This 177-nucleotide RNA was probed chemically with 2A3 and DMS. For 2A3 the reverse transcriptase was SuperScript II with manganese. It was measured as part of the RMDB libraries RFM100 and RFMREP. Conditions: 150 mM KOAc, 10 mM MgCl2 and 150 mM bicine (pH 8.5), 24 C.
[RMDB]
RNA sequence: GGGAACGACUCGAGUAGAGUCGAAAAACGCAUCAUACGUGAUGCGAGAACUACAGUUCCGCUCCUCUAGCACACAGAGGUCAAUUGGGUGCGACCCCCCCCUCUCCCGUGGGUCAACGGGAACCAAACUCGAAUCUACAUUCGUGUAGAUUCGAGUAAAAGAAACAACAACAACAAC
Reactivity to 2A3 in 0.01 (KOAc 150mM, MgCl2 10mM, bicine 150mM(pH8.5), 24C), signal-to-noise 6, nucleotides 027 to 126: a000c000g000c000a000u000c010a000u040a120c220g110u070g040a010u030g010c030g010a050g020a010a020c070u260a090c050a080g000u020u020c020c000g060c050u050c000c000u000c010u030a070g020c030a030c030a010c010a050g030a020g040g020u040c010a020a080u120u060g090g000g000u010g000c000g100a170c000c000c000c000c000c000c000c000u040c020u000c000c010c000g000u010g000g010g010u080c050a020a000c000g000g000g030a000a000c010c010a080a030
Reactivity to DMS in 0.01 (KOAc 150mM, MgCl2 10mM, bicine 150mM(pH8.5), 24C), signal-to-noise 2, nucleotides 027 to 126: a130c010g000c000a020u000c000a040u000a100c180g030u000g040a000u000g010c000g000a040g000a090a080c060u000a080c190a170g020u000u000c000c010g040c180u020c000c000u000c010u010a110g010c010a030c030a040c030a060g000a000g020g020u040c230a020a070u030u030g040g000g010u000g000c020g020a300c000c000c000c000c000c000c000c000u040c130u030c000c000c010g060u000g000g000g000u030c140a040a050c000g020g000g000a010a060c150c190a000a080